[RMDB]
RNA sequence: GGGAACGACUCGAGUAGAGUCGAAAAAGGGCGGCGGUGGUGCGGACUAGAGGCUCUGCAGUGCAAACACCAUCGAUCGUCCCUUCUUCUUUACCUUCUUCUGGAUCUUCCGACGAGACGUGACCGGUGGAGUGAAGUUUCGGUUCAUCCCAACCUGCUGAACAUACUCCUUCGGGAGUAUGUUCAGAAAAGAAACAACAACAACAAC
Reactivity to 2A3 in 0.01 (KOAc 150mM, MgCl2 10mM, bicine 150mM(pH8.5), 24C), signal-to-noise 2, nucleotides 027 to 156: a000g000g000g020c010g030g000c000g020g000u000g020g010u020g020c020g040g060a040c080u190a110g020a080g260g050c100u050c110u180g090c110a080g030u040g090c050a060a120a080c020a010c020c000a000u010c000g090a290u030c000g130u160c010c010c010u010u020c000u050u000c000u030u070u110a060c020c010u050u000c030u070u040c050u080g110g070a200u010c020u170u060c040c020g110a150c070g040a060g000a040c040g010u050g060a070c070c000g080g010u040g000g010a060g010u030g010a020a050g040u020u080u100c080g000g010u010u050c040a110u000c030c000c000a000a040c010c020u050g000